[RMDB]
RNA sequence: GGGAACGACUCGAGUAGAGUCGAAAAAUAAAGCGUAAUCGCAUCCCAGUAGCAAAGAGCAGCGUAAAGGCGAAAGCCGAACUCAAGAUCGCAUCGGGCUAACAUGCGAUCGUAGCCACGCAAAAAACUGUUAUCUAGACUUCGGUCUAGAUAACAGAAAAGAAACAACAACAACAAC
Reactivity to DMS in 0.01 (KOAc 150mM, MgCl2 10mM, bicine 150mM(pH8.5), 24C), signal-to-noise 2, nucleotides 027 to 126: a170u000a080a050a050g010c010g010u000a130a180u010c050g000c010a150u000c010c010c010a150g000u000a050g000c110a010a040a050g000a060g000c070a080g000c020g010u000a020a130a100g010g000c010g000a050a090a210g010c010c010g010a100a060c070u000c100a080a160g020a020u000c000g000c010a010u000c120g000g010g050c230u000a120a060c190a060u000g000c010g000a020u000c010g020u000a030g000c120c110a040c070g000c070a000a050a050a070a050a040
Reactivity to 2A3 in 0.01 (KOAc 150mM, MgCl2 10mM, bicine 150mM(pH8.5), 24C), signal-to-noise 1, nucleotides 027 to 126: a000u160a000a070a010g000c020g020u030a130a070u200c030g000c010a020u020c010c000c030a000g110u060a010g010c070a080a170a080g050a040g020c120a030g000c040g050u110a090a070a000g050g030c010g010a030a000a000g000c010c000g010a000a000c000u050c060a050a030g010a020u020c000g000c000a000u030c080g090g060g030c050u060a040a050c040a030u020g010c000g000a000u000c000g000u000a000g010c040c020a040c030g000c160a080a000a000a000a000a110